Chemical mapping of a 177-nucleotide RNA with 2A3 and DMS. Conditions: 150 mM KOAc, 10 mM MgCl2 and 150 mM bicine (pH 8.5), 24 C. DMS adducts were read by reverse transcription with MarathonRT. 2A3 adducts were read by reverse transcription with SuperScript II with manganese.

RNA sequence: GGGAACGACUCGAGUAGAGUCGAAAAAUCUAGACUAGAUCUAGGUCGUGUCAUGCGGUACGGAUCGUACUCUCAUGGUACGAUCAUCCAUGGUACCAUGGCAGGAUCUCAGUACGUGGAUCGAUCGGACGAUCUGUAUUUUCGAAUACAGAUCGUCAAAAGAAACAACAACAACAAC
Reactivity to 2A3 in 0.01 (KOAc 150mM, MgCl2 10mM, bicine 150mM(pH8.5), 24C), signal-to-noise 5, nucleotides 027 to 126: a000u030c040u040a030g060a090c020u040a040g020a090u010c000u020a020g000g030u010c050g120u020g000u000c010a020u040g110c110g130g010u020a010c050g090g000a030u030c010g000u000a000c020u070c030u060c140a120u290g010g000u000a000c000g000a000u000c000a000u000c040c030a100u200g090g000u030a030c000c020a020u010g020g000c030a020g080g000a010u000c030u010c010a070g070u120a080c100g070u140g040g010a040u050c050g040a080u160c090g110
Reactivity to DMS in 0.01 (KOAc 150mM, MgCl2 10mM, bicine 150mM(pH8.5), 24C), signal-to-noise 6, nucleotides 027 to 126: a030u000c030u000a080g010a070c060u010a100g010a110u000c020u000a050g020g010u010c030g020u000g010u010c010a000u000g020c300g020g020u000a010c030g000g000a030u000c010g020u000a020c000u010c190u010c220a080u010g000g010u010a020c010g010a020u000c010a070u000c120c160a130u010g010g000u000a020c040c010a030u010g000g000c070a060g000g000a030u000c010u000c130a080g010u000a050c130g020u010g010g000a090u000c060g000a110u010c120g000